RNA sequence: GGGAACGACUCGAGUAGAGUCGAAAAUGAAGCCAACCGGCCCACCCUCCCCGCUCUGACUAUUACUGAGGACACGGCGCGCACGGCGAACCUAGCAUUAGAGCUAGAUGCGGCCACCGAGGUCGGCCUCAGGUCGAUGAUUCGUCAUCGACCUGAGAAAAGAAACAACAACAACAAC
Reactivity to DMS in 0.01 (KOAc 150mM, MgCl2 10mM, bicine 150mM(pH8.5), 24C), signal-to-noise 2, nucleotides 027 to 126: u020g050a200a150g010c030c010a070a140c120c110g010g040c000c010c050a300c030c000c000u000c000c010c020c030g020c080u010c050u020g000a060c080u000a070u010u000a070c080u000g000a040g030g000a090c070a090c020g010g030c020g000c040g040c070a090c080g010g000c000g030a090a040c050c000u000a000g020c000a110u000u000a160g020a130g010c020u010a020g000a100u000g000c080g000g000c020c000a070c120c020g000a120g010g010u000c020g030g000c060